RNA sequence: GGGAACGACUCGAGUAGAGUCGAAAAUCAUAGUCCAUGUGGGGUUCCAUUCGCAUGAGUUUCAUGGACUCGAUUCAUAGAUCUAUGACACUCAAUGCGAGAUGGGACCUCGGUGGGCCAAUGGUUCCAUAUGUAGUAAAUUCGUUUACUACAUAUGAAAAGAAACAACAACAACAAC
Reactivity to DMS in 0.01 (KOAc 150mM, MgCl2 10mM, bicine 150mM(pH8.5), 24C), signal-to-noise 9, nucleotides 027 to 126: u000c010a010u000a260g000u000c000c000a000u000g010u030g030g000g000g010u000u000c000c000a010u000u000c000g010c000a020u000g000a010g010u000u000u000c000a010u000g000g000a020c170u000c080g000a220u030u030c280a180u020a120g000a070u000c000u000a000u000g000a010c040a010c000u000c000a030a060u000g000c000g000a020g010a010u000g000g010g000a010c000c000u000c000g000g030u000g000g000g000c000c040a040a020u000g000g000u000u000c100
Reactivity to 2A3 in 0.01 (KOAc 150mM, MgCl2 10mM, bicine 150mM(pH8.5), 24C), signal-to-noise 9, nucleotides 027 to 126: u020c000a000u010a010g010u000c010c000a030u110g150u270g170g000g000g000u000u000c000c000a000u010u010c000g000c000a000u000g000a000g000u000u010u000c000a000u000g030g010a020c110u010c030g130a120u210u150c060a100u170a150g050a090u000c000u000a000u000g000a000c000a000c040u000c010a060a160u010g000c000g000a010g020a020u000g000g000g000a000c000c000u000c000g000g000u000g000g000g000c010c010a050a020u010g010g000u090u000c010
The data come from the RNA Mapping Database (RMDB), libraries RFM100 and RFMREP. The record gives the reactivity of an RNA of 177 nucleotides to DMS and 2A3. Reactivities are given for positions 27 through 126.